[RMDB]
RNA sequence: GGGAACGACUCGAGUAGAGUCGAAAAUCACACUUAGCUACCUUUGCUGAGUUGGAAGCUGCGCAGAAAGCCUAUCAGGAAGCUAUGGACUCUGGUGACACCUCACCACAAGUUCUUAAGGCUUUGCCUACCUAUUAGACUUCGGUCUAAUAGGUAGAAAAGAAACAACAACAACAAC
Reactivity to DMS in 0.01 (KOAc 150mM, MgCl2 10mM, bicine 150mM(pH8.5), 24C), signal-to-noise 8, nucleotides 027 to 126: u010c040a110c080a050c050u000u000a030g020c020u000a080c200c160u010u010u010g010c010u000g020a020g010u010u010g000g000a090a100g010c050u000g000c080g020c080a080g000a070a070a060g020c020c020u000a070u000c130a120g000g000a040a020g010c040u000a100u000g000g000a020c010u010c300u010g010g010u000g000a050c230a110c290c210u000c010a010c000c000a010c270a050a030g010u000u000c000u000u000a080a100g010g000c010u000u000u000g010c140
Reactivity to 2A3 in 0.01 (KOAc 150mM, MgCl2 10mM, bicine 150mM(pH8.5), 24C), signal-to-noise 6, nucleotides 027 to 126: u040c000a020c000a000c050u030u030a010g000c020u090a100c040c080u180u150u120g000c010u010g000a020g030u050u020g040g010a030a010g030c070u080g000c060g000c050a020g140a090a030a010g030c000c010u090a120u140c040a020g090g080a030a010g020c040u040a090u120g010g010a000c000u000c020u030g000g000u000g020a020c020a090c090c050u020c000a000c010c000a010c020a030a030g010u030u010c000u050u080a100a110g020g000c000u030u020u020g040c000